[RMDB]
RNA sequence: GGGAACGACUCGAGUAGAGUCGAAAAGCGCGCGAUGCCCGCCUGGCUCAUCGGGUCGCCUUCGUGGCUGAUGAUGAACCGCACCGCGUGCCCGUCCGGCGAGAGGAACUGUUCCAGGCCGCGUUGGCAUACCCGAAAACUUCGGUUUUCGGGUAUGAAAAGAAACAACAACAACAAC
Reactivity to 2A3 in 0.01 (KOAc 150mM, MgCl2 10mM, bicine 150mM(pH8.5), 24C), signal-to-noise 3, nucleotides 027 to 126: g030c010g000c010g010c040g120a130u120g030c040c090c040g070c050c070u040g020g000c000u020c000a000u030c010g070g000g060u050c020g000c000c010u030u090c170g080u220g010g020c050u090g020a080u050g020a040u010g010a050a020c000c020g000c020a030c020c000g000c020g040u050g040c000c010c020g110u100c040c010g040g030c040g030a230g020a090g090g050a110a080c070u130g080u180u010c040c010a030g000g070c000c020g020c050g040u020u040g030g000
Reactivity to DMS in 0.01 (KOAc 150mM, MgCl2 10mM, bicine 150mM(pH8.5), 24C), signal-to-noise 4, nucleotides 027 to 126: g020c030g030c050g020c030g000a050u000g000c030c130c110g000c120c080u000g010g010c030u000c000a030u010c010g000g000g020u010c070g000c010c040u000u010c140g010u010g020g020c010u010g010a100u010g000a040u000g010a040a040c030c040g000c030a040c010c020g000c020g020u000g000c010c040c020g000u000c040c010g020g000c020g010a090g000a130g000g000a040a110c130u010g000u000u010c040c040a200g000g010c020c010g010c070g000u000u000g010g000